This 177-nucleotide RNA was probed chemically with 2A3. For 2A3, 347 sequencing reads were counted. The data come from the RNA Mapping Database (RMDB), library RFM100. Conditions: 150 mM KOAc, 10 mM MgCl2 and 150 mM bicine (pH 8.5), 24 C. Reactivities are given for positions 27 through 126.
RNA sequence: GGGAACGACUCGAGUAGAGUCGAAAAGUCUUGAACUUGAUACACAUAGUAUAGCACCUUAAAAACGAAUCAUCUGCUAGUUCAGUAUUUUCUACUUACAAUCACUCCCUCCCAGGGCAUGUAAUUAGCCGCCAAGAGUAUUCGUACUCUUGGCGGCAAAAGAAACAACAACAACAAC
Reactivity to 2A3 in 0.01 (KOAc 150mM, MgCl2 10mM, bicine 150mM(pH8.5), 24C), signal-to-noise 1, nucleotides 027 to 126: g000u060c020u290u300g050a020a020c050u000u040g030a040u170a150c020a000c000a060u160a000g120u170a070u000a070g000c000a060c000c000u000u000a030a030a030a030a020c000g000a070a000u060c010a030u040c020u140g030c000u110a020g000u040u000c070a000g000u000a060u030u110u030u000c020u000a000c040u180u010a010c010a010a090u160c000a000c100u060c000c050c050u030c020c000c040a000g000g010g000c000a050u060g000u100a080a180u000u160a050